[RMDB]
RNA sequence: GGGAACGACUCGAGUAGAGUCGAAAACAGAAUCACUUCGGUGAUUCUGAAAGAAAGAAGAAAACGCGCGACGACGAGCGCGAAAUUAAUAAAUCGUCGUAAAAAUCGAGUCCUUCGGGACUCGAAACCUACAAAAACAGUUCGCUGUUUUUGUAGGAAAAGAAACAACAACAACAAC
Reactivity to 2A3 in 0.01 (KOAc 150mM, MgCl2 10mM, bicine 150mM(pH8.5), 24C), signal-to-noise 2, nucleotides 027 to 126: c000a000g000a000a000u000c010a000c000u030u090c170g090g000u000g000a000u000u010c000u000g000a000a000a010g110a020a070a010g120a080a010g110a040a130a040a040c010g010c000g010c000g050a010c010g010a000c010g000a010g020c000g020c010g030a020a000a010u070u050a010a050u070a110a080a030u010c010g000u000c000g000u010a010a080a000a000a000u020c000g000a010g010u010c000c010u070u090c200g060g020g000a000c000u000c000g000a000a000a000
Reactivity to DMS in 0.01 (KOAc 150mM, MgCl2 10mM, bicine 150mM(pH8.5), 24C), signal-to-noise 2, nucleotides 027 to 126: c010a010g000a040a000u000c000a000c000u000u030c190g030g030u000g000a010u000u000c000u010g000a040a100a100g020a130a090a070g000a140a090g020a120a070a080a210c010g000c010g000c020g000a010c000g000a020c000g010a000g000c010g010c000g000a000a040a060u010u000a020a110u020a050a030a060u000c000g000u000c000g020u000a030a090a070a100a080u010c000g000a020g040u000c000c000u000u010c160g040g010g020a010c000u000c000g000a000a020a060